An RNA of 177 nucleotides, treated with DMS and 2A3 and read out base by base. For DMS the reverse transcriptase was MarathonRT. High DMS reactivity at an A or C suggests that its Watson-Crick edge is free. 2A3 adducts were read by reverse transcription with SuperScript II with manganese. Conditions: 150 mM KOAc, 10 mM MgCl2 and 150 mM bicine (pH 8.5), 24 C.
RNA sequence: GGGAACGACUCGAGUAGAGUCGAAAAACGCGGUGUCAUUUGGUGACUAUCCAGGUGAGUACAACCCCAAGGUGCACGGGCCCUAAGACCCCGCUCGCUUCUACGGUAAAGCCUGGCUGGGACGCCGCUCCUUCUCUUGUUUCGACAAGAGAAGGAGAAAAGAAACAACAACAACAAC
Reactivity to DMS in 0.01 (KOAc 150mM, MgCl2 10mM, bicine 150mM(pH8.5), 24C), signal-to-noise 5, nucleotides 027 to 126: a100c090g000c020g010g010u000g000u000c000a120u010u020u010g000g010u010g010a300c040u030a040u000c010c010a010g000g000u010g000a110g000u040a080c130a090a110c050c000c020c060a130a050g010g010u000g010c080a070c030g000g000g010c070c030c180u050a070a150g010a140c200c010c000c010g020c150u010c070g000c000u010u000c040u000a060c250g000g000u000a030a050a300g000c010c000u020g010g020c080u000g000g010g000a020c010g000c010c000g000
Reactivity to 2A3 in 0.01 (KOAc 150mM, MgCl2 10mM, bicine 150mM(pH8.5), 24C), signal-to-noise 6, nucleotides 027 to 126: a000c060g010c010g000g010u030g020u010c060a130u070u110u230g150g000u110g070a040c010u020a040u010c000c000a000g050g010u030g010a090g160u100a070c050a080a100c040c000c000c010a020a010g030g010u020g000c060a020c010g000g010g020c040c020c040u070a120a070g060a140c000c000c000c030g000c060u030c040g010c000u070u050c030u090a070c040g030g020u070a050a020a010g000c000c010u010g020g010c010u010g030g000g010a010c010g010c010c000g000